The data come from the RNA Mapping Database (RMDB), library TTRINS. This 177-nucleotide RNA was probed chemically with DMS. Values cover nucleotides 27 to 126.
[RMDB]
RNA sequence: GGGAACGACUCGAGUAGAGUCGAAAAGAUAUGGAGUUGUGGAACCGGCUCAACAGCCCCACGGAACUACGCUCUCGGAAACGAGAGCGCCGUGGGGACAUGAGCCUCAGUACACAACUCCUAAGUCCGAAGGCUGUUAGUUCGCUAACAGCCUUCGAAAAGAAACAACAACAACAAC
Reactivity to DMS in 0.01 (KOAc 150mM, MgCl2 10mM, bicine 150mM(pH8.5), 24C), signal-to-noise 1, nucleotides 027 to 126: g000a020u000a300u010g000g000a000g030u000u000g000u000g000g000a200a200c300c300g100g000c000u010c000a020a080c300a300g040c000c000c020c000a010c010g010g000a150a020c190u000a240c070g000c020u030c000u010c000g020g000a120a090a300c010g000a000g020a010g000c000g000c010c020g000u000g000g000g000g050a000c030a090u000g000a000g000c000c000u010c010a010g010u000a200c000a030c010a020a000c000u050c000c000u000a000a090g010u010c010